[RMDB]
RNA sequence: GGGAACGACUCGAGUAGAGUCGAAAAUCUAAGAGCGUAACACACACUCAGACUGUACGACAGUCUGACACACACAUACGCUAGUGUAUCGUGUGUGUGAUAUCGAUGUAGCAGGAAAAUGAAAGAACGAGUCAGAUCUGUUCGCAGAUCUGACUCGAAAAGAAACAACAACAACAAC
Reactivity to 2A3 in 0.01 (KOAc 150mM, MgCl2 10mM, bicine 150mM(pH8.5), 24C), signal-to-noise 3, nucleotides 027 to 126: u060c040u070a090a050g030a000g070c050g070u090a090a000c000a000c010a000c000a010c040u050c010a010g000a000c010u020g040u230a160c110g150a070c210a020g000u000c000u000g000a000c020a000c000a000c000a010c000a020u060a040c080g100c160u110a090g070u040g020u140a020u100c100g000u010g020u040g000u000g000u000g000a010u020a000u130c080g060a070u050g080u190a010g020c030a080g060g100a120a120a050a030u150g030a150a090a070g030a050a000
Reactivity to DMS in 0.01 (KOAc 150mM, MgCl2 10mM, bicine 150mM(pH8.5), 24C), signal-to-noise 2, nucleotides 027 to 126: u020c020u000a080a090g010a040g020c060g020u000a080a070c050a030c090a110c040a080c070u000c000a000g000a000c020u000g020u000a110c270g000a130c000a010g000u000c000u000g010a030c110a050c000a000c000a020c030a050u020a030c030g000c210u020a090g010u010g000u010a010u010c110g040u000g000u000g000u000g020u000g000a080u000a040u000c060g010a030u010g000u000a070g000c070a110g010g010a020a020a060a090u000g020a080a070a060g020a100a120

Chemical mapping of a 177-nucleotide RNA with 2A3 and DMS. The data come from the RNA Mapping Database (RMDB), library M2PK90. Reactivities are given for positions 27 through 126. The RNA was probed in 150 mM KOAc, 10 mM MgCl2 and 150 mM bicine (pH 8.5) at 24 C.